[RMDB]
RNA sequence: GGGAACGACUCGAGUAGAGUCGAAAACUAAGAGAGAUUUGUCAGAAUAAGAUCCUAUGUUUUGGUUGAGAAGUUCUUCCCUUAAAACAGGGAUUGAAGAAUCCACAUCUUGCUGUGGGUCACAGAUGGCUGAGCUCCCAAGAAUAGCUUAAAAGAAGAUACUCGUACUAUUCGUAGUACGAGUAUCAAAAGAAACAACAACAACAAC
Reactivity to DMS in 0.01 (KOAc 150mM, MgCl2 10mM, bicine 150mM(pH8.5), 24C), signal-to-noise 1, nucleotides 027 to 156: c050u000a040a190g020a190g000a120g010a010u000u020u000g070u000c080a090g020a130a130u010a100a300g000a040u000c000c000u010a020u000g010u000u000u020u010g000g020u010u000g020a070g000a030a100g010u000u000c070u000u000c020c000c050u000u010a020a030a060a040c110a080g000g020g010a050u010u000g010a170a100g000a120a020u000c000c020a040c010a040u020c070u010u000g020c110u010g090u010g000g030g030u000c140a070c120a090g020a120u000g020g000c050u020g010a050g020c000u000c020c020c030a070a130g000a040a120u030a050g000c060u000u000a060a140a070a110g020a160a200
Reactivity to 2A3 in 0.01 (KOAc 150mM, MgCl2 10mM, bicine 150mM(pH8.5), 24C), signal-to-noise 2, nucleotides 027 to 156: c050u120a130a010g060a000g000a020g020a070u110u120u070g050u050c010a020g040a140a130u050a130a000g030a030u040c000c010u080a180u160g050u000u020u010u060g000g060u060u060g060a080g010a140a130g020u080u000c010u020u030c000c000c000u050u180a040a120a000a000c000a000g000g000g010a000u020u060g010a060a000g010a040a020u000c000c000a000c000a010u120c050u110u290g020c080u040g020u030g020g000g000u000c000a040c000a020g060a020u100g030g010c070u030g000a000g020c020u070c040c010c000a020a010g030a060a020u130a050g020c060u100u300a080a000a000a040g200a040a020
An RNA of 207 nucleotides, treated with DMS and 2A3 and read out base by base. It was measured as part of the RMDB library OK3TST. For 2A3 the reverse transcriptase was SuperScript II with manganese.